[RMDB]
RNA sequence: GGGAACGACUCGAGUAGAGUCGAAAAAUCCCGGGGAACUCGACUUAUCGUCCCCACAUAGCAGUUUCCAGGACCCCCUUCCAAAAAGACUGAGGGGGGUGGCUAGGACGCAGGGGACCAGUGGAGCGUAGUUUGCGGUUCGCCGCAAACAAAAGAAACAACAACAACAAC
Reactivity to 2A3 in 0.01 (KOAc 150mM, MgCl2 10mM, bicine 150mM(pH8.5), 24C), signal-to-noise 3, nucleotides 027 to 129: a010u000c010c000c000g000g000g000g000a040a010c020u000c010g010a010c000u140u040a060u220c080g000u010c000c000c070c010a000c020a010u090a010g030c100a040g000u020u080u070c000c000a010g040g000a030c000c000c040c000c000u000u000c080c000a070a120a060a060a040g170a100c110u090g000a020g000g000g000g000g000g000u000g000g030c010u030a160g010g000a010c020g040c020a010g000g000g000g000a000c020c010a040g000u050g040g000a030g000c030g070u050a020
Reactivity to DMS in 0.01 (KOAc 150mM, MgCl2 10mM, bicine 150mM(pH8.5), 24C), signal-to-noise 3, nucleotides 027 to 129: a090u020c080c000c060g030g000g000g000a180a080c060u000c030g020a040c030u030u040a080u070c200g010u000c000c000c010c000a080c180a190u020a000g040c060a000g050u000u000u000c000c040a120g080g000a080c000c000c000c080c030u000u020c000c300a050a060a050a070a060g000a110c290u080g010a040g000g000g000g000g000g000u020g000g050c040u030a030g000g030a040c070g040c010a160g090g070g000g000a020c040c160a080g000u030g010g010a020g070c070g030u140a040